[RMDB]
RNA sequence: GGGAACGACUCGAGUAGAGUCGAAAACAGUUAUGUGCGUCCCUCCCGAAGCUGCGCGCUCGGUCGAAGAGGACGACCAUCGCCGAUAGAGGACGACCGGUCUUCGGUCAAGGGAAUAAGACUAAAAUCCAAAGGAGGUGUUCGCACCUCCUUUGGAAAAAGAAACAACAACAACAAC
Reactivity to DMS in 0.01 (KOAc 150mM, MgCl2 10mM, bicine 150mM(pH8.5), 24C), signal-to-noise 1, nucleotides 027 to 126: c080a100g010u000u040a040u010g010u000g010c000g000u000c010c010c010u000c020c000c000g020a080a110g070c020u010g070c180g010c130g010c010u010c040g010g000u020c110g000a070a090g010a030g040g000a010c030g010a000c060c040a030u000c080g060c020c030g000a100u000a070g020a120g000g000a110c070g020a090c130c030g020g010u010c020u010u010c030g000g010u000c020a050a150g010g010g000a080a100u000a030a040g030a040c110u000a080a040a100a160